An RNA of 177 nucleotides, treated with DMS and read out base by base. The reactions ran in a buffer of 150 mM KOAc, 10 mM MgCl2 and 150 mM bicine (pH 8.5), at 24 C. The data come from the RNA Mapping Database (RMDB), library OK2TRN. DMS adducts were read by reverse transcription with MarathonRT. For DMS, 1,134 sequencing reads were counted.
RNA sequence: GGGAACGACUCGAGUAGAGUCGAAAAUCUUGUCAUAGCCCUGGAGGAGGGUCUACAACCAGCAACGGAGCACUGUAUGGCCUUCCUUGGGACAGUCUAGAAACAGGAAUCCCUUGACUGGGGUAGGUGUAGGAUUCUACUUCGGUAGAAUCCUACAAAAAGAAACAACAACAACAAC
Reactivity to DMS in 0.01 (KOAc 150mM, MgCl2 10mM, bicine 150mM(pH8.5), 24C), signal-to-noise 2, nucleotides 027 to 126: u010c000u000u000g000u020c010a300u000a020g010c030c030c000u000g020g030a070g020g000a020g010g020g030u000c000u010a020c050a030a090c040c130a070g000c190a100a100c160g010g020a110g020c090a240c130u010g000u000a020u010g020g000c010c010u000u000c020c010u000u020g020g010g020a050c060a100g010u000c040u000a050g000a080a100a070c040a020g030g010a030a170u000c000c000c000u000u010g020a120c070u000g010g000g000g030u000a040g040g000